[RMDB]
RNA sequence: GGGAACGACUCGAGUAGAGUCGAAAAUACCGCAGGCCUGCGGUGCGGCAGUGUGGAGACCUGCCGUAAGCCGUGUUGUUUUGACUACCGGGAGAAAGCGUAUGCGGAGGCAGCGCUUUCAGGGUCUAAAAGUAUGGGAUCUUCGGAUCCCAUACAACCCCACAUGUAUGUUCGCAUACAUGUGGGGAAAAGAAACAACAACAACAAC
Reactivity to 2A3 in 0.01 (KOAc 150mM, MgCl2 10mM, bicine 150mM(pH8.5), 24C), signal-to-noise 2, nucleotides 027 to 156: u110a000c010c000g020c020a050g020g140c000c050u040g000c000g000g010u000g000c000g010g000c010a000g000u060g020u100g240g120a070g040a040c000c000u000g000c000c000g010u020a030a000g040c020c040g060u060g000u050u040g010u010u050u050u070g070a050c050u060a040c100c040g030g000g040a130g000a010a010a000g000c000g010u060a270u240g030c040g100g070a060g300g000c000a000g000c000g000c030u010u000u000c000a000g020g000g010u010c020u020a050a060a050a010g000u000a010u000g000g000g010a000u000c010u000u030c110g070g000a000u000c010c000c000a000u000a000c000a000a000